The record gives the reactivity of an RNA of 177 nucleotides to 2A3 and DMS.
[RMDB]
RNA sequence: GGGAACGACUCGAGUAGAGUCGAAAAGGCGGCCGUGAGACCAUUGUCGCUGAAUGCGGGUUAUGCAGUGGGCGUUUGAGCACAUAAUGGUGGAAGGCACCGGCCGGCGACAGGCUGUCUCGCAUUAGCCCGAAUGGUGCUUCGGCAUCGUUCGGGCAAAAGAAACAACAACAACAAC
Reactivity to 2A3 in 0.01 (KOAc 150mM, MgCl2 10mM, bicine 150mM(pH8.5), 24C), signal-to-noise 9, nucleotides 027 to 126: g050g000c020g020g030c020c040g060u060g020a040g020a020c010c040a040u010u050g010u010c010g000c020u010g060a080a020u090g010c020g040g070g030u140u120a070u190g030c030a040g050u100g020g060g000c040g030u050u130u200g090a070g030c050a020c010a070u200a140a080u170g060g020u050g020g080a090a050g090g010c010a010c010c000g030g000c020c000g010g010c000g000a010c010a010g020g020c030u070g010u000c000u010c010g010c010a070u070u150a030
Reactivity to DMS in 0.01 (KOAc 150mM, MgCl2 10mM, bicine 150mM(pH8.5), 24C), signal-to-noise 5, nucleotides 027 to 126: g000g000c030g000g010c040c060g010u000g000a080g000a090c030c020a150u040u020g000u000c020g000c000u010g000a070a060u010g010c010g010g000g010u020u030a070u040g000c040a080g020u010g010g000g020c030g030u040u030u040g020a180g010c010a030c110a090u010a070a090u030g010g010u000g000g000a090a130g020g010c040a070c050c030g000g010c050c040g000g000c020g000a040c040a050g010g000c050u030g000u000c010u000c050g020c050a120u020u020a170

The reactions ran in a buffer of 150 mM KOAc, 10 mM MgCl2 and 150 mM bicine (pH 8.5), at 24 C. Reactivities are given for positions 27 through 126.